[RMDB]
RNA sequence: GGGAACGACUCGAGUAGAGUCGAAAAGGCCUGUUCGCAGGCCAUGUUUCCUAAGUCCCUCUUGAAGGGAAGCGAUGAAAGCAAGAAUCGGAAACGAUUUGAUGACCUGGAGCUUCCCGUAGAGAGGGAUAUGGACGAAAGCCACAUUCGUGUGGAAUGUGUACAUGGACUUCGGUCCAUGUACACAAAAAGAAACAACAACAACAAC
Reactivity to DMS in 0.01 (KOAc 150mM, MgCl2 10mM, bicine 150mM(pH8.5), 24C), signal-to-noise 1, nucleotides 027 to 156: g030g010c000c000u010g000u000u000c100g040c000a010g070g000c000c020a020u000g050u010u000u000c000c000u000a130a300g040u000c000c010c020u030c000u000u020g000a240a300g000g010g000a010a000g010c010g010a300u000g000a080a140a030g000c010a120a210g000a010a030u000c000g070g020a200a200a300c030g000a010u000u010u000g010a130u000g000a150c300c030u000g030g000a300g000c010u000u000c000c010c000g010u000a220g000a030g000a010g040g040g030a020u000a010u000g000g030a090c060g000a270a200a160g000c010c000a020c000a060u000u000c240g040u010g040u030g000g000a080a090
Reactivity to 2A3 in 0.01 (KOAc 150mM, MgCl2 10mM, bicine 150mM(pH8.5), 24C), signal-to-noise 1, nucleotides 027 to 156: g050g000c000c000u000g020u080u030c300g040c080a000g010g020c010c010a000u030g020u000u040u000c000c000u000a070a020g020u000c000c000c000u000c010u030u040g140a120a010g000g000g040a000a010g030c000g190a140u100g050a050a000a000g010c060a040a120g030a000a000u010c000g000g060a090a050a060c040g000a020u020u000u020g170a240u080g090a210c000c040u010g010g060a010g000c000u010u000c000c000c000g000u000a020g000a000g000a000g000g010g010a000u010a000u000g020g010a000c030g150a140a020a010g100c000c110a020c000a010u070u170c290g170u060g000u000g080g030a020a190